[RMDB]
RNA sequence: GGGAACGACUCGAGUAGAGUCGAAAAAUGUACUUCUCUUGGCCACCACAGUACCCUUCACGCUUUGCUUCACAGGACGCGCCUGGGGCCGAGCGGGGGCCUUUGCCUUUCCGGUCUGAGGGGCGGCAGACAUGCAUUAGUUCGCUAAUGCAUGUCUAAAAGAAACAACAACAACAAC
Reactivity to DMS in 0.01 (KOAc 150mM, MgCl2 10mM, bicine 150mM(pH8.5), 24C), signal-to-noise 3, nucleotides 027 to 126: a080u010g010u000a060c100u000u000c050u000c030u000u000g010g010c030c010a050c040c020a060c080a080g010u000a080c030c010c050u000u010c080a110c080g020c030u000u000u000g010c040u000u000c070a080c130a080g000g000a120c100g010c090g000c010c000u000g020g010g000g010c020c020g010a060g030c170g000g000g000g020g020c050c260u010u010u010g000c000c000u000u000u000c060c020g000g010u000c030u010g000a060g000g000g010g020c030g010g010c100
Reactivity to 2A3 in 0.01 (KOAc 150mM, MgCl2 10mM, bicine 150mM(pH8.5), 24C), signal-to-noise 2, nucleotides 027 to 126: a010u120g030u090a090c040u060u040c000u000c000u040u070g040g000c020c010a020c020c000a040c060a050g050u090a090c000c020c000u070u080c080a030c070g030c040u070u040u050g010c000u120u090c110a110c030a160g020g090a060c030g030c030g100c060c000u020g050g000g030g000c000c000g020a040g000c120g000g000g000g010g090c000c040u110u140u180g000c000c000u060u060u050c020c030g010g030u050c040u040g170a030g000g010g030g020c000g000g020c060